[RMDB]
RNA sequence: GGGAACGACUCGAGUAGAGUCGAAAACUAGGAUCGUUCGCGAUCCUAGAAAGGCGCGGCACCGUCCGCGGAACAAUCGGCAAAACAAGAAAGUCAGCAUAAAAAUCAUCAGCUUCGGCUGAUGAAACUGCAUCUAAUUCUUCGGAAUUAGAUGCAGAAAAGAAACAACAACAACAAC
Reactivity to 2A3 in 0.01 (KOAc 150mM, MgCl2 10mM, bicine 150mM(pH8.5), 24C), signal-to-noise 2, nucleotides 027 to 126: c000u000a000g000g000a010u000c010g020u080u040c120g010c000g130a000u000c010c000u010a010g000a020a030a000g080g060c000g010c040g010g000c100a060c290c030g140u130c010c010g000c000g010g020a040a040c030a020a090u060c010g020g000c000a040a020a050a080c010a000a100g080a180a090a010g060u070c040a030g040c080a080u210a170a160a010a010a030u060c000a000u000c000a000g000c010u040u050c190g130g000c000u020g000a000u000g000a010a020a000
Reactivity to DMS in 0.01 (KOAc 150mM, MgCl2 10mM, bicine 150mM(pH8.5), 24C), signal-to-noise 1, nucleotides 027 to 126: c020u020a000g070g010a000u020c010g030u000u010c240g030c000g060a010u000c000c000u000a000g010a100a050a090g020g000c010g000c000g000g000c060a280c160c100g000u020c010c010g000c060g030g000a060a050c220a070a060u000c020g000g000c040a020a110a150a060c070a100a140g010a050a090a020g030u000c030a070g010c120a080u010a000a050a040a120a170u000c000a010u010c000a000g000c000u010u000c250g020g030c010u000g020a000u000g020a000a040a140